[RMDB]
RNA sequence: GGGAACGACUCGAGUAGAGUCGAAAAGACAGAUCUCAGAGAGAACCUCAGCGGCCCAGUUUUUCCUUUUUUGCCUUGUGUGAAAGGGAAUUUAACACUCUGCCUUGAGCUCCCUCCCCGUUUCGACCGUUUGGAGUAUCUUCGGAUACUCCAAACGAAAAGAAACAACAACAACAAC
Reactivity to 2A3 in 0.01 (KOAc 150mM, MgCl2 10mM, bicine 150mM(pH8.5), 24C), signal-to-noise 2, nucleotides 027 to 126: g100a030c020a020g090a080u050c010u020c060a020g060a010g000a020g020a050a040c000c020u010c040a010g010c030g040g010c000c000c020a010g000u000u000u000u070u000c040c000u170u140u040u010u070u140g060c020c040u210u150g100u060g010u030g220a020a000a000g040g020g050a030a050u060u060u060a070a020c050a000c010u010c010u020g090c020c020u010u060g020a010g000c000u030c010c010c000u000c000c010c010c000g000u000u030u010c040g020a060c020